Description
Conditions: 150 mM KOAc, 10 mM MgCl2 and 150 mM bicine (pH 8.5), 24 C. Structure probing data (DMS and 2A3) for a 207-nucleotide construct. It was measured as part of the RMDB library OK3TST. For 2A3, 840 sequencing reads were counted. DMS (dimethyl sulfate) methylates the pairing face of unpaired adenines and cytosines.

RNA sequence: GGGAACGACUCGAGUAGAGUCGAAAACUAAUUUAUCCACUCCGAUUGCGGCAAAGUUGGUGACGAAAAGUACGUUAACUGGGAAGAACUUUCAUCUACAUGACAUUUGACGUUAUUACUUUCGAAGUUGGCCAAGAUCACAGAGUAGAGAAUGUCAAGUAAUGGCCAUAUUCGUAUGGCCAUUACUAAAAGAAACAACAACAACAAC
Reactivity to DMS in 0.01 (KOAc 150mM, MgCl2 10mM, bicine 150mM(pH8.5), 24C), signal-to-noise 2, nucleotides 027 to 156: c070u020a030a110u000u000u010a140u000c000c010a030c000u000c010c040g010a140u000u010g040c300g030g000c040a040a020a060g030u000u000g010g020u010g000a220c030g000a040a040a020a070g020u000a060c070g070u000u000a050a080c070u000g020g020g010a140a140g040a030a170c100u000u010u000c060a090u000c070u010a070c100a170u000g010a060c040a090u000u020u000g000a070c070g020u000u000a040u000u000a080c070u000u000u000c040g040a060a200g010u010u020g000g020c040c020a050a300g000a130u000c040a080c030a040g010a040g080u000a060g000a080g030a020a080u000g000u000c010a120
Reactivity to 2A3 in 0.01 (KOAc 150mM, MgCl2 10mM, bicine 150mM(pH8.5), 24C), signal-to-noise 2, nucleotides 027 to 156: c020u060a060a180u110u030u220a110u080c030c000a040c010u050c000c010g000a000u050u060g010c000g000g000c030a050a050a120g030u120u100g170g060u070g030a020c000g030a050a000a000a010g060u040a000c030g000u020u020a080a080c050u020g010g030g080a050a060g000a130a010c030u110u220u090c040a150u060c040u140a120c030a090u110g160a020c000a000u010u020u010g000a010c010g010u010u030a130u060u150a020c030u020u050u020c020g080a050a030g110u120u170g070g000c000c030a020a010g030a000u010c000a010c050a050g020a030g000u150a010g050a000g080a060a050u110g050u200c110a000